[RMDB]
RNA sequence: GGGAACGACUCGAGUAGAGUCGAAAAAGGAUGCAAAUCCCUACUGGCGCCGACGCCACAAUCUUGCGGUUGAAUUGCUCAUUCUCUUCCAACUGGAACGCAUUCACUUCCGCAGGCAACAGCAUUUUGCACAUGCUAUCUUCGGAUAGCAUGUGCAAAAAGAAACAACAACAACAAC
Reactivity to 2A3 in 0.01 (KOAc 150mM, MgCl2 10mM, bicine 150mM(pH8.5), 24C), signal-to-noise 1, nucleotides 027 to 126: a000g070g010a110u060g060c010a000a000a090u020c000c000c000u050a070c030u000g000g020c000g000c060c250g040a140c100g020c050c000a000c020a000a000u020c000u040u020g000c000g020g010u020u000g040a060a020u150u050g010c000u000c130a040u180u120c110u030c000u160u000c060c010a220a140c030u140g000g000a050a030c050g000c030a000u000u000c060a080c070u040u000c000c010g000c030a000g020g000c010a100a060c000a020g090c060a030u000u000u000

Structure probing data (2A3) for a 177-nucleotide construct.
The RNA was probed in 150 mM KOAc, 10 mM MgCl2 and 150 mM bicine (pH 8.5) at 24 C.
As a SHAPE reagent, 2A3 marks flexible, mostly unpaired nucleotides at the ribose 2'-OH.
For 2A3, 453 sequencing reads were counted.
Source: RMDB library RFM100, as collected in RNAgym.